[RMDB]
RNA sequence: GGGAACGACUCGAGUAGAGUCGAAAAUCAACCGAGCCACGGUGUGCUUCUCGCCGUACUCGCUCAUGUCGAUGCGGACCAUCGCCCGCUCGUCGUCGAACAGGAAGUCGGCCAGCGCCUUGGCCAGGCCGGUUAGGAAUUUCGAUUCCUAACCGGCAAAAGAAACAACAACAACAAC
Reactivity to 2A3 in 0.01 (KOAc 150mM, MgCl2 10mM, bicine 150mM(pH8.5), 24C), signal-to-noise 9, nucleotides 027 to 126: u100c020a020a060c010c030g010a020g010c010c020a030c030g000g000u040g060u110g050c050u060u060c040u030c040g010c010c000g020u050a040c020u020c040g030c010u050c040a080u160g040u030c010g020a020u200g010c010g000g030a080c030c040a210u140c120g040c010c010c000g010c010u010c020g040u010c020g030u020c080g040a070a040c010a060g100g090a090a010g030u050c030g010g000c010c010a030g020c020g060c030c020u050u030g010g000c010c000a020g040
Reactivity to DMS in 0.01 (KOAc 150mM, MgCl2 10mM, bicine 150mM(pH8.5), 24C), signal-to-noise 4, nucleotides 027 to 126: u020c120a130a160c100c030g010a100g030c060c050a040c060g000g000u000g000u010g030c050u000u030c050u000c090g010c030c000g000u020a050c040u000c080g000c060u020c040a090u000g020u020c040g000a060u030g060c030g000g020a110c060c080a050u020c050g020c050c040c030g010c010u010c030g020u010c040g020u000c090g040a050a070c140a110g000g010a130a060g040u010c030g000g000c000c290a080g010c070g000c020c050u000u020g000g000c010c040a080g020
Notes
Structure probing data (2A3 and DMS) for a 177-nucleotide construct. For DMS, 6,208 sequencing reads were counted. For DMS the reverse transcriptase was MarathonRT. The data come from the RNA Mapping Database (RMDB), library OK1LIB.